[RMDB]
RNA sequence: GGGAACGACUCGAGUAGAGUCGAAAAGAUAUGGAGUCGUCAUGACAUGCCUGCUACUAAGCGGAAUAACGUCGGAAACGACGUUAUUCCGCUUAGUAGAAGGCAACAGCAUGCGACUCCUAAGUCAGUUAGGAUUUAUCUUCGGAUAAAUCCUAACAAAAGAAACAACAACAACAAC
Reactivity to DMS in 0.01 (KOAc 150mM, MgCl2 10mM, bicine 150mM(pH8.5), 24C), signal-to-noise 1, nucleotides 027 to 126: g030a100u000a300u010g010g010a020g000u000c020g000u010c040a020u000g010a070c100a240u000g000c000c000u000g010c000u010a000c010u000a000a000g010c000g030g000a040a030u000a010a030c010g030u000c000g000g000a130a080a250c000g000a020c020g000u000u000a000u000u020c000c000g020c000u000u000a010g020u000a010g000a010a010g010g010c000a010a010c240a180g010c000a000u000g000c000g020a000c000u000c000c000u010a010a100g020u010c090a150
Record summary:
The record gives the reactivity of an RNA of 177 nucleotides to DMS. Conditions: 150 mM KOAc, 10 mM MgCl2 and 150 mM bicine (pH 8.5), 24 C. For DMS the reverse transcriptase was MarathonRT. Source: RMDB library TTRINS, as collected in RNAgym.